Overview: Structure probing data (DMS and 2A3) for a 177-nucleotide construct. Source: RMDB library M2PK50, as collected in RNAgym. The DMS profile rests on 2,616 reads.

[RMDB]
RNA sequence: GGGAACGACUCGAGUAGAGUCGAAAAGCAUACAACUUCGGUUGUAUGCAACGACAGAGUUGACUGUCAUAAACAACGUAACAUGUGUGUUACAAUAACACAUUGCAGCAGCUUUCGAGCUGCUGAACAAUGGUAGGGACUUCGGUCCCUACCAUUGAAAAGAAACAACAACAACAAC
Reactivity to DMS in 0.01 (KOAc 150mM, MgCl2 10mM, bicine 150mM(pH8.5), 24C), signal-to-noise 3, nucleotides 027 to 126: g020c010a000u010a000c000a020a000c010u000u020c240g020g000u000u000g000u000a010u000g000c010a030a060c110g000a030c010a010g000a110g010u000u000g010a190c010u000g010u000c150a120u000a050a050a060c050a070a050c070g010u030a110a070c100a070u000g020u000g020u000g000u000u000a080c210a050a070u010a060a020c000a010c020a030u000u020g010c010a010g010c010a000g000c000u000u000u020c180g000a020g010c000u000g000c000u000g000a040a170
Reactivity to 2A3 in 0.01 (KOAc 150mM, MgCl2 10mM, bicine 150mM(pH8.5), 24C), signal-to-noise 2, nucleotides 027 to 126: g000c000a000u000a000c000a000a000c020u040u100c220g110g010u000u010g000u000a020u010g000c010a010a010c020g000a000c000a010g030a000g030u000u040g090a290c000u000g000u030c040a000u130a030a070a010c030a000a040c110g110u120a060a030c090a170u100g020u020g020u020g020u070u050a060c100a150a090u150a130a010c020a000c010a020u030u160g030c000a000g010c000a010g000c000u070u010u100c160g010a000g000c000u000g000c000u000g000a060a000